[RMDB]
RNA sequence: GGGAACGACUCGAGUAGAGUCGAAAAUGAAUUUUCUAUGUACAUAGAUAUGGUGAUAGUAUGGGAGUGUGUGUGUGUGUAUAGUUCUGCAUACAUAGAAUUAUACUGCUCUUGGCAUAACCUGCUUUUUUUUUUCAACUGAGCAAUGUAUACAAAAAUUUACCACUCGAUUCGUCGAGUGGUAAAUAAAAGAAACAACAACAACAAC
Reactivity to 2A3 in 0.01 (KOAc 150mM, MgCl2 10mM, bicine 150mM(pH8.5), 24C), signal-to-noise 2, nucleotides 027 to 156: u120g010a020a050u090u050u040u000c010u040a080u090g050u050a050c040a070u070a080g100a040u080a050u150g010g030u040g010a050u040a080g090u070a110u110g030g020g000a080g030u060g000u010g010u000g000u000g000u000g010u090g000u000a040u050a050g040u060u020c010u020g040c090a030u070a160c010a020u160a040g010a000a000u030u020a020u000a010c030u010g050c020u000c000u060u060g050g010c010a020u010a060a120c000c020u030g000c090u050u050u080u010u010u010u010u030u010u060c040a090a030c030u010g030a020g030c000a070a100u070g000u050a030u150a070c100a000a150a070a010
Reactivity to DMS in 0.01 (KOAc 150mM, MgCl2 10mM, bicine 150mM(pH8.5), 24C), signal-to-noise 1, nucleotides 027 to 156: u000g040a130a130u020u000u010u010c020u000a100u020g000u000a040c050a150u000a080g010a110u010a100u000g010g020u010g070a120u010a080g010u010a030u000g030g000g020a150g060u020g030u000g030u000g020u010g000u000g020u000g010u020a070u000a140g000u010u000c020u010g040c100a170u000a090c160a090u010a060g020a050a070u000u000a030u000a040c010u010g000c040u010c040u000u010g030g010c020a090u010a030a130c140c070u000g010c000u000u000u020u020u000u030u000u000u020u000c030a080a020c010u000g010a030g000c040a000a040u010g000u000a080u060a100c050a050a060a070a050